This 207-nucleotide RNA was probed chemically with 2A3 and DMS.
For 2A3 the reverse transcriptase was SuperScript II with manganese.
For DMS, 3,037 sequencing reads were counted.
The RNA was probed in 150 mM KOAc, 10 mM MgCl2 and 150 mM bicine (pH 8.5) at 24 C.
[RMDB]
RNA sequence: GGGAACGACUCGAGUAGAGUCGAAAAUAAUAACAAUUCUUACGCUUUAGCUGCCUAAUAAGCGCUUAACGUAGAUCCUCCCAGGAUCGUCCAUGUUCUGGAUCUGGGUCCUAAAUUUAGUGGACUUACGCUCAAAGCUUCCACCUGGAGUUGCGAGGUGUAGAUAUUUCUUCGGAAAUAUCUACACAAAAGAAACAACAACAACAAC
Reactivity to 2A3 in 0.01 (KOAc 150mM, MgCl2 10mM, bicine 150mM(pH8.5), 24C), signal-to-noise 5, nucleotides 027 to 156: u130a000a050u130a060a030c080a070a130u150u020c030u050u120a040c040g100c100u010u010u010a010g020c090u140g000c100c010u120a170a070u270a240a010g000c000g010c010u010u020a010a010c000g010u000a000g000a040u000c000c010u000c000c010c000a000g000g000a010u010c030g000u000c010c000a020u040g020u050u050c010u010g020g050a110u050c070u120g040g020g000u050c010c030u130a170a200a190u200u280u160a050g010u010g010g000a000c000u040u070a090c130g020c020u040c040a050a040a010g000c000u080u040c030c060a140c060c080u120g010g000a030g010u090u020g030c040g020a040g020
Reactivity to DMS in 0.01 (KOAc 150mM, MgCl2 10mM, bicine 150mM(pH8.5), 24C), signal-to-noise 1, nucleotides 027 to 156: u010a060a150u010a030a130c090a060a060u000u010c080u000u000a000c020g010c010u020u020u020a020g040c000u040g150c000c000u000a080a110u020a150a050g000c010g030c020u000u000a010a020c010g020u010a020g000a060u000c020c040u000c020c000c030a090g030g000a020u000c050g040u000c050c030a060u010g000u000u000c070u000g010g010a050u000c000u010g030g050g000u020c000c040u050a050a070a180u000u000u000a070g080u010g020g040a050c070u000u000a050c040g000c010u010c100a080a080a150g020c030u000u010c020c040a030c060c070u000g020g010a160g000u000u000g030c040g030a060g030